[RMDB]
RNA sequence: GGGAACGACUCGAGUAGAGUCGAAAAAGACGGUUGACGUCUCCGAUGAUCUACCGACGUACGAACAGUACCUGAAGGAUUUUCGUACGGAAUCACACAAGCAACCAGGGGAGGUGGGCAAAUGGAUAAAGUCAGCAGAGCAAAUACUACAAUCCUACCCAUCGUAGUCAUUCGUGACUACGAUGGGAAAAGAAACAACAACAACAAC
Reactivity to 2A3 in 0.01 (KOAc 150mM, MgCl2 10mM, bicine 150mM(pH8.5), 24C), signal-to-noise 2, nucleotides 027 to 156: a000g020a000c020g010g000u090u050g020a020c010g010u040c050u050c050c110g110a080u060g020a060u010c010u060a070c000c000g030a050c000g020u040a020c000g010a080a020c030a080g020u070a210c020c010u240g100a200a180g020g010a040u020u000u020u010c000g000u000a020c010g020g100a080a060u120c030a010c050a060c000a080a090g040c000a000a080c060c050a050g010g000g000g020a050g000g040u090g050g000g000c020a010a010a100u090g010g010a080u120a110a080a020g040u020c010a010g000c010a010g020a000g130c040a110a060a030u110a080c030u050a040c040a030a060u050c000c010u030a050